The record gives the reactivity of an RNA of 177 nucleotides to 2A3 and DMS. DMS adducts were read by reverse transcription with MarathonRT. The DMS profile rests on 5,854 reads.
RNA sequence: GGGAACGACUCGAGUAGAGUCGAAAAGCUCUAGGAGACUAGAGCGAUACGUUAGAGAGCUCGUGGCAUAACUAACGGAUAGCCAGGUACGAGGUUGCCAGAGGACAUAGCUAUAGCUAUGUCCAAAGAGCUAACAUAGGUUCGCCUAUGUUAGCUCAAAAGAAACAACAACAACAAC
Reactivity to 2A3 in 0.01 (KOAc 150mM, MgCl2 10mM, bicine 150mM(pH8.5), 24C), signal-to-noise 2, nucleotides 027 to 126: g000c000u000c000u000a000g010g020a050g040a060c000u000a000g000a000g010c000g000a010u010a000c010g010u030u020a030g030a000g000a020g070c000u030c130g150u130g020g000c040a050u030a080a040c020u010a020a010c020g000g030a020u020a030g100c060c070a050g070g000u080a060c090g050a050g080g070u150u010g010c000c020a030g010a060g020g000a000c020a000u000a000g000c000u090a020u060a220g010c000u000a010u010g010u000c000c000a000a000a000
Reactivity to DMS in 0.01 (KOAc 150mM, MgCl2 10mM, bicine 150mM(pH8.5), 24C), signal-to-noise 3, nucleotides 027 to 126: g010c000u010c010u020a000g010g000a250g000a200c020u000a000g010a020g000c000g000a050u010a020c030g000u000u000a030g010a080g000a220g020c010u000c130g020u050g000g030c050a040u030a230a180c010u010a000a000c030g000g000a070u000a090g000c010c000a130g000g000u020a050c070g000a070g000g000u000u000g000c020c040a090g010a270g000g000a010c000a020u000a000g000c000u030a150u040a150g030c000u000a000u000g010u000c000c000a000a030a070